[RMDB]
RNA sequence: GGGAACGACUCGAGUAGAGUCGAAAAUUUGAAAUCUCGCAUGAACUGGAUAUUUUGGAUAUUGUUUUUAAACUUGCUUAUGUUAGGCAUUAGUCUAAUCGAUUAUGAUUUUCCAAUAGACAGUUUACCGACCUACUACUUUCGAGUAGUAGGUCGGAAAAGAAACAACAACAACAAC
Reactivity to 2A3 in 0.01 (KOAc 150mM, MgCl2 10mM, bicine 150mM(pH8.5), 24C), signal-to-noise 2, nucleotides 027 to 126: u100u030u100g050a000a000a050u020c020u000c070g060c050a040u030g020a010a010c000u010g060g020a040u000a050u030u140u040u060g000g020a020u020a020u070u110g070u050u060u050u040u280a080a030a020c050u000u130g050c000u110u020a060u270g070u120u110a080g060g090c050a060u130u120a000g040u000c100u130a050a040u090c050g050a060u070u080a020u200g070a040u050u070u160u000c020c000a000a000u000a000g060a030c000a000g000u030u000u010a030

Source: RMDB library OK1LIB, as collected in RNAgym. An RNA of 177 nucleotides, treated with 2A3 and read out base by base. 2A3 adducts were read by reverse transcription with SuperScript II with manganese. For 2A3, 1,038 sequencing reads were counted. Conditions: 150 mM KOAc, 10 mM MgCl2 and 150 mM bicine (pH 8.5), 24 C.